Description
Structure probing data (DMS) for a 177-nucleotide construct. The reactions ran in a buffer of 150 mM KOAc, 10 mM MgCl2 and 150 mM bicine (pH 8.5), at 24 C.

RNA sequence: GGGAACGACUCGAGUAGAGUCGAAAAAAUAUGCUCGACAGGCUGCCUGUCCGAGAGAGCUUUUAGAUCUUCUGAUCUUUCCCUGCAGCAUAUCGCUUAUGCAUCAAGCGAUUGUCGGAUCACACAAUGCCCUAUCUGUCUUCGGACAGAUAGGGCAAAAAGAAACAACAACAACAAC
Reactivity to DMS in 0.01 (KOAc 150mM, MgCl2 10mM, bicine 150mM(pH8.5), 24C), signal-to-noise 1, nucleotides 027 to 126: a050a110u000a030u010g010c000u000c000g000a050c090a000g000g000c150u000g030c060c020u000g000u010c050c060g000a040g000a080g000a110g000c190u000u000u000u000a020g000a010u000c010u000u020c300u000g000a030u000c000u000u000u000c000c000c010u040g010c110a210g000c010a080u010a000u010c010g020c000u000u000a090u040g010c220a070u010c120a030a010g000c010g010a010u000u000g000u000c050g000g060a140u010c080a080c090a080c170a060a100